[RMDB]
RNA sequence: GGGAACGACUCGAGUAGAGUCGAAAAUGUUGCGGUCGGCACAGGAGCAGCUGCAGGACAGAACGACCCCGGAAUUGAGUUGAAUCGGACUGUCGAACUCCCCGAGGAGGAGCGAACGUAUGCACAAUCCAUUUAUGGCGUUCGCGCCAUAAAUGGAAAAAGAAACAACAACAACAAC
Reactivity to DMS in 0.01 (KOAc 150mM, MgCl2 10mM, bicine 150mM(pH8.5), 24C), signal-to-noise 2, nucleotides 027 to 126: u010g040u000u000g010c080g000g010u000c050g010g010c060a020c100a150g030g030a090g030c110a100g010c020u000g030c050a140g000g000a070c020a060g000a020a200c060g010a100c010c010c000c100g010g000a150a120u000u000g000a090g000u000u000g010a140a050u010c020g000g000a160c080u010g000u000c030g010a050a090c050u000c050c010c050c070g000a090g000g000a070g000g000a100g010c010g010a080a030c120g000u020a040u000g030c050a060c100a070a140

Conditions: 150 mM KOAc, 10 mM MgCl2 and 150 mM bicine (pH 8.5), 24 C. An RNA of 177 nucleotides, treated with DMS and read out base by base. For DMS, 1,151 sequencing reads were counted. Values cover nucleotides 27 to 126.